[RMDB]
RNA sequence: GGGAACGACUCGAGUAGAGUCGAAAAGGGGGCAGGUUUUUAAGUAACCUUUGCCAACUUGGGCUAUUUGGAAGAGUAAAAGACCACACUCCACAGUGGGCUAUACCACUUAGUAUAGUUCGCUACUUCCGUUUCUGUUGUUCGCAACAGAAACGGAAAAAGAAACAACAACAACAAC
Reactivity to 2A3 in 0.01 (KOAc 150mM, MgCl2 10mM, bicine 150mM(pH8.5), 24C), signal-to-noise 1, nucleotides 027 to 126: g000g010g000g000g080c040a000g050g000u040u000u000u030u140a170a120g060u000a000a000c000c000u000u210u010g070c000c000a000a000c050u020u000g030g000g000c000u010a010u120u060u190g020g010a030a020g000a000g180u220a000a040a090a000g010a000c000c000a000c000a000c090u000c030c000a050c040a170g010u000g000g000g000c000u000a000u000a020c000c140a130c300u170u300a020g000u000a000u010a000g000u000u000c000g000c020u020a090c000u000
An RNA of 177 nucleotides, treated with 2A3 and read out base by base. Reactivities are rounded to 0.1 and cut off at 0 and 3. The RNA was probed in 150 mM KOAc, 10 mM MgCl2 and 150 mM bicine (pH 8.5) at 24 C. The 2A3 profile rests on 429 reads.